[RMDB]
RNA sequence: GGGAACGACUCGAGUAGAGUCGAAAAGAUCCAGCUAGGUACAGUGCAUACUAGGUCGAUCAGCGAUCUGAUCUCAUGGUACGCUAGCUAGGCUAUCAUGCUAGGCUGUGAUCACUAGAGUACGUACCCAGACAGAAUCCUUCGGGAUUCUGUCUGGAAAAGAAACAACAACAACAAC
Reactivity to 2A3 in 0.01 (KOAc 150mM, MgCl2 10mM, bicine 150mM(pH8.5), 24C), signal-to-noise 2, nucleotides 027 to 126: g020a000u070c000c030a020g040c050u060a000g000g010u010a010c050a130g000u030g120c010a050u060a250c010u040a020g080g070u080c070g040a100u090c060a030g210c030g090a070u050c040u080g040a100u040c020u000c060a040u070g040g000u020a040c160g000c110u010a030g060c000u010a040g020g000c010u040a020u070c020a030u140g030c020u030a050g060g000c000u020g100u120g120a050u060c000a010c030u010a030g000a010g080u040a040c000g010u010a010c000
Reactivity to DMS in 0.01 (KOAc 150mM, MgCl2 10mM, bicine 150mM(pH8.5), 24C), signal-to-noise 2, nucleotides 027 to 126: g010a070u000c010c020a090g000c060u010a080g000g000u010a010c030a160g050u000g000c170a060u030a170c050u000a030g010g000u000c040g020a080u010c130a140g020c110g010a040u010c060u000g010a040u010c070u000c030a050u000g020g010u000a010c120g010c000u000a030g030c100u010a110g000g000c090u000a050u000c040a030u000g010c180u000a090g000g010c010u010g010u030g000a090u000c100a050c030u010a060g000a090g020u000a030c060g000u000a150c080

An RNA of 177 nucleotides, treated with 2A3 and DMS and read out base by base.
For 2A3 the reverse transcriptase was SuperScript II with manganese.
As a SHAPE reagent, 2A3 marks flexible, mostly unpaired nucleotides at the ribose 2'-OH.
For DMS the reverse transcriptase was MarathonRT.